[RMDB]
RNA sequence: GGGAACGACUCGAGUAGAGUCGAAAAUCGAAACGCUGGGCGACGGGAGAUCAGCACUCGGGAGUUAACUGAAGCGCGCACGGUUAACGACGAUCGAGUGGAUCUUUGAUCGUCGCCUGUGCUGAAGCGCGCACGGCAACCGAAAGGUGCGAUCAAAGCUUUAUGAAUUGUUCGCAAUUCAUAAAGCAAAAGAAACAACAACAACAAC
Reactivity to DMS in 0.01 (KOAc 150mM, MgCl2 10mM, bicine 150mM(pH8.5), 24C), signal-to-noise 2, nucleotides 027 to 156: u010c080g010a120a110a070c010g020c020u030g010g020g000c010g020a110c030g000g030g030a290g000a020u000c020a100g030c000a010c000u000c010g040g050g000a160g030u000u010a020a040c010u000g030a030a090g030c000g010c020g020c030a300c010g030g000u000u000a030a010c000g010a110c160g000a070u000c000g040a040g000u010g020g010a080u000c040u000u000u000g010a220u000c000g000u000c010g040c010c000u020g000u010g000c030u000g030a060a030g040c050g000c010g020c020a260c020g000g000c020a080a130c040c040g000a070a130a150g000g020u000g020c000g010a090u000c020a120a120a230
Reactivity to 2A3 in 0.01 (KOAc 150mM, MgCl2 10mM, bicine 150mM(pH8.5), 24C), signal-to-noise 3, nucleotides 027 to 156: u140c020g030a020a000a060c030g000c000u040g000g000g010c000g010a000c010g000g050g060a100g010a040u050c030a010g140c000a000c000u000c000g000g000g000a020g000u000u000a000a000c000u010g040a190a060g000c010g000c000g000c010a010c020g000g000u000u000a020a000c010g230a140c020g000a010u000c000g000a000g000u010g030g030a040u070c060u220u090u120g000a010u000c000g000u000c000g000c000c000u000g000u000g000c000u010g010a110a030g000c000g000c000g000c010a000c010g010g000c000a020a020c020c000g020a070a030a030g000g010u020g010c040g000a040u130c060a040a080a000
An RNA of 207 nucleotides, treated with DMS and 2A3 and read out base by base. For 2A3, 5,815 sequencing reads were counted.